[RMDB]
RNA sequence: GGGAACGACUCGAGUAGAGUCGAAAAUGGGUUUGACAUAAUGCUGAUAGACAAACAGUAGCAUUGGGGUAUGCCCCUUACAGCGCUAGGUUCAAUAACCGACAAAGAAAAUAACGAAGUGUUGGUAGAUCCAAAUUUGAUCAUUAACCAACAAGCAGAUACUGAUACGCUUCGGCGUAUCAGUAUCAAAAGAAACAACAACAACAAC
Reactivity to DMS in 0.01 (KOAc 150mM, MgCl2 10mM, bicine 150mM(pH8.5), 24C), signal-to-noise 2, nucleotides 027 to 156: u000g060g010g000u000u000u000g040a150c070a050u000a090a050u000g000c000u000g030a150u020a180g040a210c090a040a140a150c060a180g040u000a070g000c020a060u000u010g000g060g030g000u010a050u000g000c020c000c000c000u020u020a110c080a070g020c040g040c090u020a070g020g000u000u000c020a060a050u000a100a020c020c010g020a100c040a110a100a110g020a080a040a030a180u000a030a160c120g020a110a200g000u020g010u000u020g020g000u000a170g020a050u000c000c060a040a120a200u000u000u000g000a020u000c010a060u000u000a040a060c000c000a010a020c010a030a190g040c040a060
Reactivity to 2A3 in 0.01 (KOAc 150mM, MgCl2 10mM, bicine 150mM(pH8.5), 24C), signal-to-noise 3, nucleotides 027 to 156: u090g030g010g000u050u060u110g060a020c020a050u180a120a050u120g010c000u010g020a110u100a090g190a100c070a020a210a010c050a090g100u100a020g010c060a040u030u070g010g000g000g000u110a040u210g080c000c000c000c000u000u010a010c020a010g000c000g000c060u070a030g000g050u010u030c040a100a070u080a130a000c000c000g030a030c050a010a120a010g110a080a060a030a050u190a090a030c090g090a090a030g000u020g000u040u000g020g000u010a020g000a000u010c080c070a080a140a230u150u110u150g010a010u000c000a040u040u110a020a020c000c000a000a010c020a000a010g030c010a000
The data come from the RNA Mapping Database (RMDB), library RSTRND. Structure probing data (DMS and 2A3) for a 207-nucleotide construct. Reactivities are given for positions 27 through 156. The reactions ran in a buffer of 150 mM KOAc, 10 mM MgCl2 and 150 mM bicine (pH 8.5), at 24 C. For DMS, 2,618 sequencing reads were counted. 2A3 adducts were read by reverse transcription with SuperScript II with manganese.